[RMDB]
RNA sequence: GGGAACGACUCGAGUAGAGUCGAAAAGUCGCCUCCUUCGGGAGGCGACAAAUACAGAGACUACGCAACUCUGAAAAACACAACAAAAGUGUAAAAGCGUACAAACAUCCACGUUCGCGUGGAUGAACUGGAUGUAUUAGUUCGCUAAUACAUCCAGAAAAGAAACAACAACAACAAC
Reactivity to 2A3 in 0.01 (KOAc 150mM, MgCl2 10mM, bicine 150mM(pH8.5), 24C), signal-to-noise 3, nucleotides 027 to 126: g010u000c000g000c000c000u010c010c020u030u070c130g080g010g020a000g000g000c010g000a010c000a000a000a000u040a000c000a000g010a010g010a010c070u030a000c040g010c010a060a090c020u000c000u010g030a030a020a000a000a000c070a030c050a220a040c040a090a160a070a040g010u020g020u060a030a090a030a040g020c000g010u030a050c110a010a130a020c000a010u010c000c010a010c000g010u030u040c240g000c010g100u010g000g010a000u000g000a020a020
Reactivity to DMS in 0.01 (KOAc 150mM, MgCl2 10mM, bicine 150mM(pH8.5), 24C), signal-to-noise 3, nucleotides 027 to 126: g000u000c020g020c010c000u000c010c000u000u000c160g030g000g020a020g010g010c000g000a000c030a000a030a100u020a270c030a000g000a020g030a250c040u000a030c020g010c010a090a120c000u010c000u020g010a070a080a090a170a020c030a010c010a060a100c280a100a080a120a100g020u000g010u020a020a040a050a210g010c010g000u010a020c300a050a090a230c020a000u000c000c000a000c000g020u000u010c160g040c000g020u000g020g000a000u000g000a030a050
The data come from the RNA Mapping Database (RMDB), library M2PK50.
Chemical mapping of a 177-nucleotide RNA with 2A3 and DMS.
For 2A3, 5,314 sequencing reads were counted.
In probing experiments dimethyl sulfate is read out at A N1 and C N3, which are open when not base-paired.